An RNA of 177 nucleotides, treated with 2A3 and DMS and read out base by base. The reactions ran in a buffer of 150 mM KOAc, 10 mM MgCl2 and 150 mM bicine (pH 8.5), at 24 C. For 2A3 the reverse transcriptase was SuperScript II with manganese. High 2A3 reactivity points to a flexible backbone, as in loops and unpaired stretches. Values cover nucleotides 27 to 126. The DMS profile rests on 9,538 reads.
[RMDB]
RNA sequence: GGGAACGACUCGAGUAGAGUCGAAAACAUUGGUUUACUCCAGCGCCGCGUAAAUCGCUUCACGUUCUGGAUAACGCCGUUUUUCUCCUGAAUUCAAACUGGAAGCUAUUGAGCAGGUCGUUAAGUAAUGUAUUGACGAAUUCGUUCGUCAAUACAUAAAAGAAACAACAACAACAAC
Reactivity to 2A3 in 0.01 (KOAc 150mM, MgCl2 10mM, bicine 150mM(pH8.5), 24C), signal-to-noise 5, nucleotides 027 to 126: c030a030u060u190g060g010u070u060u060a050c050u030c020c020a030g010c020g030c040c010g000c020g020u050a050a120a110u160c030g000c020u060u090c050a050c060g050u070u000c030u030g010g030a030u030a050a030c060g030c050c030g020u000u020u040u080u000c050u020c000c010u040g090a140a080u120u090c050a090a060a060c050u080g070g020a030a000g010c020u030a040u090u070g020a030g020c050a060g060g040u120c020g030u070u070a070a030g030u030a060
Reactivity to DMS in 0.01 (KOAc 150mM, MgCl2 10mM, bicine 150mM(pH8.5), 24C), signal-to-noise 7, nucleotides 027 to 126: c060a150u020u010g010g010u000u000u000a090c170u010c020c040a060g000c040g030c080c100g000c030g010u000a090a080a050u010c070g010c020u000u000c120a070c050g010u000u000c110u000g010g010a040u000a070a120c210g020c040c030g000u000u000u000u010u010c080u000c020c030u000g000a100a080u000u010c080a030a040a050c050u000g000g000a050a050g010c040u000a060u000u000g000a150g020c020a070g020g000u000c020g010u000u010a040a070g010u010a070